[RMDB]
RNA sequence: GGGAACGACUCGAGUAGAGUCGAAAAGGGUUUGAGCCAUCGCCCGAAUACGAUGGUUGAUACAAGUCGUCAUUGUACGCGACGUAGUACGUACUCAUUAGUGCGAAAGCACGGUUAGUCCGACUUGGCAGGGACGAUCUUCUGUCAAUACUUAGAAGCUCAUCACCUGAUUCGUCAGGUGAUGAGCAAAAGAAACAACAACAACAAC
Reactivity to 2A3 in 0.01 (KOAc 150mM, MgCl2 10mM, bicine 150mM(pH8.5), 24C), signal-to-noise 1, nucleotides 027 to 156: g050g000g050u110u170u210g090a020g020c000c000a000u000c000g030c000c000c000g030a030a080u130a000c020g000a000u000g000g040u020u050g030a020u060a210c070a090a040g080u000c010g060u080c060a180u030u170g060u130a060c010g050c060g020a020c000g000u000a030g000u020a110c000g000u020a000c030u050c020a020u090u000a020g010u000g000c050g060a170a020a000g000c000a000c000g000g000u000u000a030g020u000c000c000g000a070c090u080u000g040g010c050a020g000g000g000a060c050g090a140u000c000u130u030c010u000g000u050c010a000a020u010a120c020u070u090a020g000a300a000

Annotation:
An RNA of 207 nucleotides, treated with 2A3 and read out base by base. The RNA was probed in 150 mM KOAc, 10 mM MgCl2 and 150 mM bicine (pH 8.5) at 24 C. It was measured as part of the RMDB library OK3TST.